[RMDB]
Structure probing data (DMS and 2A3) for a 177-nucleotide construct. DMS adducts were read by reverse transcription with MarathonRT.

RNA sequence: GGGAACGACUCGAGUAGAGUCGAAAAGGCGAGGAGUUGGCCACCGUGUUAUCCCGCAACACCUUCCACUGGGUCCUGGCGUUCGCCGACAGCGGGUUGCUCACCUCCGCGGUGUACAACGAGCUCGAUUAUCCGGUAGGUUCGCCUACCGGAUAAUAAAAGAAACAACAACAACAAC
Reactivity to DMS in 0.01 (KOAc 150mM, MgCl2 10mM, bicine 150mM(pH8.5), 24C), signal-to-noise 5, nucleotides 027 to 126: g010g000c030g010a040g010g010a300g020u000u000g000g000c100c010a030c010c010g020u000g000u010u000a080u000c020c020c030g020c060a080a080c130a110c060c060u010u010c060c070a130c090u000g000g000g010u000c090c110u000g030g000c020g000u000u000c150g020c020c030g010a080c120a100g020c030g000g010g010u010u000g010c030u000c060a090c060c020u000c130c050g010c030g000g010u000g010u010a030c020a010a010c000g000a250g010c010u000c030g000
Reactivity to 2A3 in 0.01 (KOAc 150mM, MgCl2 10mM, bicine 150mM(pH8.5), 24C), signal-to-noise 2, nucleotides 027 to 126: g120g050c010g030a020g030g020a040g050u030u020g000g040c010c010a000c000c020g000u040g020u030u100a120u090c010c000c000g000c000a030a050c020a060c080c000u080u100c100c020a090c120u080g010g020g070u080c040c050u060g040g000c040g120u210u190c160g020c020c000g020a010c030a000g010c000g030g030g050u040u060g000c040u050c030a100c040c010u070c030c030g000c030g000g020u010g000u000a010c000a030a000c030g030a020g090c010u010c020g000